[RMDB]
RNA sequence: GGGAACGACUCGAGUAGAGUCGAAAAGCACUGUAGGACCCCGCUCACUCCGCACCGGGAAACUGGGCCUAAGAGCGCAACGUUGUACAACUCAUGUCACCCAAGGGUAGCCACCCUCUAGCUCCCUGAUGCCAUUCUCUCCGUUAAAAAGUGGUUAAUUUAUAGCAGGUUUCGACCUGCUAUAAAUAAAAGAAACAACAACAACAAC
Reactivity to DMS in 0.01 (KOAc 150mM, MgCl2 10mM, bicine 150mM(pH8.5), 24C), signal-to-noise 1, nucleotides 027 to 156: g020c020a030c050u000g010u000a200g010g010a050c030c040c040c050g010c000u000c040a060c040u020c030c000g070c090a120c040c020g040g000g000a050a100a150c030u000g020g000g030c010c050u030a070a110g000a060g010c060g020c040a060a090c040g010u010u000g020u000a100c060a090a080c000u020c000a080u010g010u020c090a120c010c000c060a100a070g020g030g040u000a040g010c010c030a110c020c010c000u000c040u000a060g000c020u000c010c010c020u000g020a080u000g020c040c000a070u000u000c040u020c020u000c020c030g010u010u000a050a050a030a060a020g030u030g010g020u010u020a040
Reactivity to 2A3 in 0.01 (KOAc 150mM, MgCl2 10mM, bicine 150mM(pH8.5), 24C), signal-to-noise 1, nucleotides 027 to 156: g010c010a000c040u080g090u070a070g030g110a170c000c020c040c000g020c000u050c010a070c010u020c040c030g090c020a110c100c030g000g000g040a020a030a030c000u020g010g010g000c000c000u150a150a110g020a000g030c000g050c040a020a020c040g080u070u080g030u070a050c030a090a100c160u040c060a050u080g080u070c050a060c000c000c000a020a050g000g030g020u050a020g050c020c030a040c060c000c000u000c020u010a020g000c020u000c000c000c000u020g040a070u120g050c000c010a040u060u000c020u000c020u020c090c020g020u000u040a040a180a000a030a040g010u090g010g000u060u110a050
An RNA of 207 nucleotides, treated with DMS and 2A3 and read out base by base. The reactions ran in a buffer of 150 mM KOAc, 10 mM MgCl2 and 150 mM bicine (pH 8.5), at 24 C. The 2A3 profile rests on 522 reads. The data come from the RNA Mapping Database (RMDB), library OK3TST. In probing experiments dimethyl sulfate is read out at A N1 and C N3, which are open when not base-paired.